[RMDB]
RNA sequence: GGGAACGACUCGAGUAGAGUCGAAAAAGCCGUGGCGAAUUGAUCACCACGGAGGACGCUUUGGAGUUCGCCCACGGCUGUGUGUCGUGCACAAUCCGCGACGACCUGCUGGUGCUGUUACGCAGACGUGCUUGGACAUUUUCGAAUGUCCAAGCACAAAAGAAACAACAACAACAAC
Reactivity to 2A3 in 0.01 (KOAc 150mM, MgCl2 10mM, bicine 150mM(pH8.5), 24C), signal-to-noise 2, nucleotides 027 to 126: a000g000c000c000g000u000g010g000c040g000a060a040u130u110g110a140u280c110a070c130c020a010c040g020g000a040g070g020a010c070g040c120u140u030u120g000g000a030g010u010u030c010g030c000c000c010a010c040g000g030c010u030g000u000g010u010g000u000c040g040u030g050c100a010c050a140a170u020c050c050g000c000g020a050c020g020a050c010c000u090g010c100u080g020g050u050g060c040u040g030u080u070a070c180g000c030a060g010a010c050
Reactivity to DMS in 0.01 (KOAc 150mM, MgCl2 10mM, bicine 150mM(pH8.5), 24C), signal-to-noise 1, nucleotides 027 to 126: a110g000c000c000g010u000g000g010c000g000a090a040u000u030g000a080u000c000a190c060c000a100c070g020g000a060g010g000a110c280g000c050u010u000u000g000g000a090g000u000u000c000g000c220c070c000a050c030g050g020c020u010g010u040g050u010g000u000c000g030u010g040c100a020c100a110a040u030c080c080g000c000g000a010c060g000a050c130c110u010g000c050u000g000g030u040g030c000u020g000u000u040a070c170g000c040a000g000a160c130